[RMDB]
RNA sequence: GGGAACGACUCGAGUAGAGUCGAAAAGCACCGCCGCAGUGCAGCCAACCACCCACCGCACACACGCUGCCCGAGCCUGCUCCUGUCGCAGUCGUACCCGGUCCGGGGCCGGACCCGGGUAGGCGUACGCAGUAUGCCUAUUCGUAGGCAUACUGCGAAAAGAAACAACAACAACAAC
Reactivity to 2A3 in 0.01 (KOAc 150mM, MgCl2 10mM, bicine 150mM(pH8.5), 24C), signal-to-noise 2, nucleotides 027 to 126: g010c000a010c040c050g090c040c030g010c060a030g020u030g050c000a010g030c020c010a030a030c020c020a030c020c000c010a030c020c030g040c010a030c000a010c000a010c060g030c020u020g020c000c000c000g040a030g040c010c020u040g000c010u030c000c020u070g030u050c010g000c110a030g040u040c020g090u050a030c010c030c000g000g030u010c010c020g050g000g200g050c110c020g030g040a100c120c120c010g000g000g000u020a040g000g010c020g010u060a020
Reactivity to DMS in 0.01 (KOAc 150mM, MgCl2 10mM, bicine 150mM(pH8.5), 24C), signal-to-noise 4, nucleotides 027 to 126: g000c040a070c030c040g000c050c070g030c060a100g000u000g020c040a110g010c050c070a090a090c080c040a080c040c020c030a070c060c060g000c050a060c100a070c110a070c070g000c030u000g010c020c030c030g000a060g000c020c020u000g020c030u000c010c020u000g020u010c060g010c090a100g020u000c030g010u010a050c010c000c000g010g000u010c010c030g020g010g010g020c140c030g000g000a030c060c020c010g020g000g020u000a010g020g000c020g000u010a120